[RMDB]
RNA sequence: GGGAACGACUCGAGUAGAGUCGAAAAGAUAUGGAGCAAUCUGUCUUUCUAAGACAGUAUGUCGGAAACGACAUAUCGAGAAAGGACAGAGUUGCUCCUAAGUCAAAAGCGAGACUUCGGUCUCGCACAAGGUCAAUUUGUUCGCAAAUUGACCUUGAAAAGAAACAACAACAACAAC
Reactivity to 2A3 in 0.01 (KOAc 150mM, MgCl2 10mM, bicine 150mM(pH8.5), 24C), signal-to-noise 3, nucleotides 027 to 126: g020a010u070a050u170g000g000a000g000c000a000a010u010c020u010g000u000c010u000u090u050c070u130a200a060g100a090c010a020g050u010a000u000g000u010c000g040g010a100a050a040c010g000a000c010a000u000a010u080c050g020a010g060a060a060a050g240g030a010c000a020g040a010g120u020u020g000c010u000c010c000u010a020a000g050u000c020a020a000a050a170g000c010g000a000g000a000c020u090u170c300g140g010u000c010u000c000g000c000a000
Reactivity to DMS in 0.01 (KOAc 150mM, MgCl2 10mM, bicine 150mM(pH8.5), 24C), signal-to-noise 4, nucleotides 027 to 126: g000a060u010a300u000g000g000a020g050c010a040a050u020c010u020g000u000c000u000u000u000c030u000a260a160g020a110c300a130g020u000a010u000g000u000c000g010g010a120a100a160c000g020a000c000a000u000a010u000c060g010a040g010a010a050a030g020g000a040c010a040g000a040g020u020u000g020c000u000c000c000u000a010a080g010u020c050a090a050a140a120g010c010g000a030g010a000c000u010u010c250g040g000u000c000u000c000g010c000a030